[RMDB]
Chemical mapping of a 207-nucleotide RNA with 2A3.
Values cover nucleotides 27 to 156.
It was measured as part of the RMDB library M2RFPK.
Values are in units of 0.01, from 0 to 300, in steps of 10.
The reactions ran in a buffer of 150 mM KOAc, 10 mM MgCl2 and 150 mM bicine (pH 8.5), at 24 C.
For 2A3, 549 sequencing reads were counted.

RNA sequence: GGGAACGACUCGAGUAGAGUCGAAAAUCCGACGAGCUGAACGCUUUCGAAGGAAAGCUUGACCAGCUAAUCUUCUGCAACGACAUUACGAGGACUGCCCUUAGAGGCUCAUGGCGAUAGGUCACCCAAAACUAUUUGAGGUUCGCCUCAAAUAGAACAGAAGUGCAUGGUUCGCCAUGCACUUCUGAAAAGAAACAACAACAACAAC
Reactivity to 2A3 in 0.01 (KOAc 150mM, MgCl2 10mM, bicine 150mM(pH8.5), 24C), signal-to-noise 1, nucleotides 027 to 156: u000c020c000g000a070c070g020a020g010c010u050g030a150a060c080g010c000u050u050u010c040g160a060a060g180g020a030a010a000g010c080u070u110g050a080c000c010a000g020c010u020a040a070u080c040u110u040c030u080g090c020a060a020c040g170a050c020a070u140u120a040c120g030a030g040g010a050c030u050g040c000c000c000u000u090a080g030a050g020g040c000u000c020a030u030g060g000c040g010a040u050a060g070g000u100c020a140c020c060c010a000a080a090a110c000u000a000u040u000u000g000a000g010g030u030u130c230g120c070c000u000c000a000a000a000u000a000g000a050a000